Conditions: 150 mM KOAc, 10 mM MgCl2 and 150 mM bicine (pH 8.5), 24 C. The record gives the reactivity of an RNA of 177 nucleotides to 2A3 and DMS. For 2A3 the reverse transcriptase was SuperScript II with manganese. DMS adducts were read by reverse transcription with MarathonRT. It was measured as part of the RMDB library 15KREP.
RNA sequence: GGGAACGACUCGAGUAGAGUCGAAAAACAGUGAAACCUGGCGCAGCAUUUAGUGUGUUAGCAUGCUAUAAUGGUCGUCCGACUGGUACAUUCACUGUUGUAAUGCGCCCUAACUACACAAUUAAGGACUCUAUAUGGGGUUCGCCCCAUAUAGAGUAAAAGAAACAACAACAACAAC
Reactivity to 2A3 in 0.01 (KOAc 150mM, MgCl2 10mM, bicine 150mM(pH8.5), 24C), signal-to-noise 2, nucleotides 027 to 126: a000c010a000g000u000g010a010a030a030c000c010u010g060g000c020g060c070a080g000c010a000u000u000u010a020g000u030g000u010g060u040u030a090g210c000a000u020g040c000u030a030u080a230a010u020g120g090u090c020g040u000c020c010g040a110c100u070g000g010u040a020c020a050u000u040c000a000c000u000g000u000u000g000u040a080a060u070g050c030g030c050c000c000u020a030a040c050u140a030c070a010c020a120a150u240u140a170a030g090g020
Reactivity to DMS in 0.01 (KOAc 150mM, MgCl2 10mM, bicine 150mM(pH8.5), 24C), signal-to-noise 2, nucleotides 027 to 126: a020c010a010g010u010g000a030a040a090c020c010u000g020g000c000g010c190a120g020c000a020u000u000u000a000g010u000g040u010g000u000u020a120g040c000a010u000g010c010u000a010u030a020a010u000g010g010u000c040g010u010c080c090g000a120c120u000g000g020u000a080c240a300u000u000c010a010c010u010g000u000u000g010u000a070a030u000g020c220g020c000c020c020u010a060a070c120u000a040c080a060c170a080a110u010u000a060a120g000g000
Reactivities are given for positions 27 through 126.